[RMDB]
RNA sequence: GGGAACGACUCGAGUAGAGUCGAAAAGAUAUGGAUUCCAAUAGCUUUUGACGCCUAUGAGUCGGAAACGACUCUAAGGGCGAUAAGCUGAUGGAAUCCUAAGUCAAACUACUUCUUCGGAAGUAGAUCCAUUUAGGGAGUUCGCUCCCUAAAUGGAAAAAGAAACAACAACAACAAC
Reactivity to DMS in 0.01 (KOAc 150mM, MgCl2 10mM, bicine 150mM(pH8.5), 24C), signal-to-noise 2, nucleotides 027 to 126: g020a040u000a300u000g000g010a000u000u020c000c020a040a200u020a030g010c000u000u000u020u000g030a250c100g040c000c000u010a300u000g000a000g020u000c000g010g040a100a050a260c000g000a030c010u000c000u010a050a180g000g000g000c020g000a090u000a010a050g000c000u000g000a070u010g000g000a060a000u000c010c000u010a030a050g000u010c020a130a130a230c000u000a000c000u000u000c000u000u040c280g020g000a020a010g010u000a000g000a100
Reactivity to 2A3 in 0.01 (KOAc 150mM, MgCl2 10mM, bicine 150mM(pH8.5), 24C), signal-to-noise 2, nucleotides 027 to 126: g040a000u040a040u130g010g020a010u020u030c000c010a020a140u090a020g000c000u200u230u160u270g300a210c040g010c000c000u060a060u220g000a020g040u020c010g000g010a020a130a040c000g010a020c020u000c020u020a070a080g030g010g000c010g000a000u010a030a010g000c000u020g000a110u020g000g020a000a000u000c000c000u000a020a010g020u000c020a030a200a190c010u000a000c000u000u040c000u020u150c300g170g000a000a000g020u000a000g000a030
Chemical mapping of a 177-nucleotide RNA with DMS and 2A3. 2A3 adducts were read by reverse transcription with SuperScript II with manganese. The data come from the RNA Mapping Database (RMDB), library TTRDES.